[RMDB]
RNA sequence: GGGAACGACUCGAGUAGAGUCGAAAAAGCGAGUGAACACUCCUAGAAAAUAGGAGUGAAACCGAUCUUAAACACUCGCAAGUAGUUAAACAAAGCAUAGCAUAGCUAUGCAGAUCGGUCCUACAAACGCAGCAGGCAUGUUCGCAUGCCUGCUGCGAAAAGAAACAACAACAACAAC
Reactivity to 2A3 in 0.01 (KOAc 150mM, MgCl2 10mM, bicine 150mM(pH8.5), 24C), signal-to-noise 1, nucleotides 027 to 126: a000g000c000g010a000g000u000g000a090a000c000a000c000u020c000c000u000a030g130a120a300a040a050u070a000g000g000a000g000u000g000a000a000a000c000c000g000a000u020c030u050u080a000a090a000c000a000c000u000c000g000c000a000a000g060u110a030g030u030u260a080a120a000c080a080a110a000g020c000a000u000a000g000c080a240u050a090g000c000u000a000u000g010c000a000g010a000u000c000g000g000u000c010c000u300a300c270a060a220a000